[RMDB]
RNA sequence: GGGAACGACUCGAGUAGAGUCGAAAAAUGAGAUCCCAUCUUGCACACUGUGCUAAUUUGAGAUUCUGAUGCCUCCUACUUGGAGAGAUCUGGACUAGAAGUCAGGGCAUCUGACUCUGCCAGCCACAAAACGUACAAGGCUUCGGCCUUGUACGAACUAUACUCUAGUCUUCGGACUAGAGUAUAGAAAAGAAACAACAACAACAAC
Reactivity to DMS in 0.01 (KOAc 150mM, MgCl2 10mM, bicine 150mM(pH8.5), 24C), signal-to-noise 2, nucleotides 027 to 156: a120u010g000a100g000a050u010c010c010c000a070u000c090u010u000g020c000a020c010a210c090u000g000u000g010c010u000a020a070u020u010u010g030a060g020a040u000u000c030u000g010a060u000g030c030c020u020c030c020u000a090c170u000u000g020g010a060g020a150g000a080u020c000u000g040g000a040c050u020a080g000a130a050g000u000c050a020g040g020g040c200a110u000c010u000g010a050c010u000c010u000g010c030c020a040g030c050c040a140c100a070a070a090a130c030g030u000a010c000a010a060g010g030c000u000u000c300g060g000c000c000u000u000g020u010a000c000g010a000a030
Reactivity to 2A3 in 0.01 (KOAc 150mM, MgCl2 10mM, bicine 150mM(pH8.5), 24C), signal-to-noise 5, nucleotides 027 to 156: a000u210g020a060g010a040u020c020c000c000a020u050c050u050u080g030c030a040c030a050c130u190g020u020g040c020u050a100a150u080u070u130g080a100g010a070u130u110c060u120g050a090u130g090c010c010u010c000c030u080a210c080u160u240g010g000a030g000a000g000a080u050c010u020g000g050a070c050u100a090g030a180a020g060u010c000a000g030g030g210c050a110u090c090u010g000a010c000u000c000u000g010c020c010a030g030c030c000a110c040a060a080a080a020c010g000u000a000c000a000a010g000g000c000u050u120c190g040g000c000c000u010u000g000u000a000c010g000a000a000
An RNA of 207 nucleotides, treated with DMS and 2A3 and read out base by base. The reactions ran in a buffer of 150 mM KOAc, 10 mM MgCl2 and 150 mM bicine (pH 8.5), at 24 C. For DMS the reverse transcriptase was MarathonRT. 2A3 is a SHAPE reagent: it acylates the 2'-hydroxyl of flexible nucleotides of all four kinds. Source: RMDB library M2RFPK, as collected in RNAgym.